[RMDB]
RNA sequence: GGGAACGACUCGAGUAGAGUCGAAAAGGCUGUCGUAGACGACCAAGACAGCCACUGUUGUCGGGUUUUUACCUUAGGCUCUUUUGAGCGACGACAGACGAUCCUCGGUCGUCUAUAGGAUCGGAAAGGGUUGGAGGUUGUUCGCAACCUCUGACCCAAAAGAAACAACAACAACAAC
Reactivity to DMS in 0.01 (KOAc 150mM, MgCl2 10mM, bicine 150mM(pH8.5), 24C), signal-to-noise 7, nucleotides 027 to 126: g020g020c000u000g000u000c030g000u020a060g010a020c000g010a010c000c010a140a150g000a040c010a010g010c000c010a120c010u000g000u000u010g000u010c010g000g010g000u000u030u040u010u040a030c010c000u000u030a000g000g010c000u010c000u010u030u020u050g000a010g020c000g000a010c000g010a010c010a020g000a090c150g010a080u010c010c000u010c250g010g000u000c010g000u000c010u010a050u030a080g000g000a140u000c030g000g000a120a090a090
Reactivity to 2A3 in 0.01 (KOAc 150mM, MgCl2 10mM, bicine 150mM(pH8.5), 24C), signal-to-noise 7, nucleotides 027 to 126: g000g000c000u010g010u020c030g040u020a030g000a010c000g000a000c000c000a020a000g000a000c000a000g010c000c000a010c000u010g000u000u000g000u000c010g000g010g030u020u020u010u110u210a030c000c000u030u100a000g000g000c000u000c010u020u180u100u280g000a000g000c010g000a000c000g000a000c000a000g000a010c060g040a070u040c000c000u010c020g000g000u000c000g000u000c000u000a000u010a000g010g020a030u060c040g000g050a080a040a030